[RMDB]
RNA sequence: GGGAACGACUCGAGUAGAGUCGAAAAGUUGACUGCGAAAAGCAGUCAACAUGGCUGACACGUGUCCAAGUCAGCGAAGGACACUAAAGAUGCAGCGUUUGAGCGUGUCCCUCAAGCAGCUGCAUCAGAUGCGCAUAGUGUUCGCACUAUGCGCAUCAAAAGAAACAACAACAACAAC
Reactivity to DMS in 0.01 (KOAc 150mM, MgCl2 10mM, bicine 150mM(pH8.5), 24C), signal-to-noise 2, nucleotides 027 to 126: g030u010u010g000a010c000u000g000c030g000a110a110a090a200g030c000a000g000u000c000a030a000c000a080u020g000g000c000u010g000a020c030a070c140g000u050g000u000c000c000a180a080g020u000c030a130g020c040g060a200a170g000g010a030c100a060c050u060a040a170a080g000a000u000g010c020a000g020c000g020u000u000u020g000a000g000c180g000u000g000u000c040c020c010u000c000a040a030g010c120a150g080c000u000g010c000a000u000c010a040
Reactivity to 2A3 in 0.01 (KOAc 150mM, MgCl2 10mM, bicine 150mM(pH8.5), 24C), signal-to-noise 5, nucleotides 027 to 126: g000u000u000g000a000c000u010g010c020g030a090a100a110a160g010c000a000g000u000c000a010a000c000a000u010g160g000c020u030g040a010c010a020c200g200u150g040u060c020c000a060a050g050u060c030a000g020c010g030a060a040g040g020a010c020a010c070u180a100a050a100g000a000u000g000c010a000g000c000g020u030u060u060g010a010g000c130g040u110g040u080c010c010c000u000c010a040a050g030c050a030g000c000u000g000c010a000u000c000a000
An RNA of 177 nucleotides, treated with DMS and 2A3 and read out base by base. The 2A3 profile rests on 6,457 reads. The RNA was probed in 150 mM KOAc, 10 mM MgCl2 and 150 mM bicine (pH 8.5) at 24 C. The data come from the RNA Mapping Database (RMDB), library OK1LIB.